[RMDB]
RNA sequence: GGGAACGACUCGAGUAGAGUCGAAAACGCGAUCAGCCCGGGCUUUCCCUACUUUGGGGCCCAAUGCUGUCGCGAAGAGUUCGGCUCUGUCAGCCCGGCUGGGUCCGGGUGGGGGCCGGCACAGAGGGACACACCGGGCCGGGGCGCCGAGGAUAGCGAAUAAGAGAGAGUUCGCUCUCUCUUAUUCAAAAGAAACAACAACAACAAC
Reactivity to 2A3 in 0.01 (KOAc 150mM, MgCl2 10mM, bicine 150mM(pH8.5), 24C), signal-to-noise 2, nucleotides 027 to 156: c040g050c000g000a130u170c020a010g010c000c020c060g020g030g000c090u130u280u170c040c020c000u150a230c120u180u200u190g000g000g000g040c010c010c060a030a050u170g020c020u010g000u000c000g000c000g040a000a040g050a010g050u060u060c000g020g010c010u000c020u050g220u170c040a040g000c000c000c010g010g040c130u240g050g020g050u020c000c000g030g010g000u060g010g000g000g000g050c000c080g000g020c010a020c030a030g120a040g090g020g010a010c000a000c010a010c060c000g000g000g000c000c020g000g000g000g000c010g010c020c010g010a010g000g060a060u080a020g090c060

Record summary
Chemical mapping of a 207-nucleotide RNA with 2A3. As a SHAPE reagent, 2A3 marks flexible, mostly unpaired nucleotides at the ribose 2'-OH.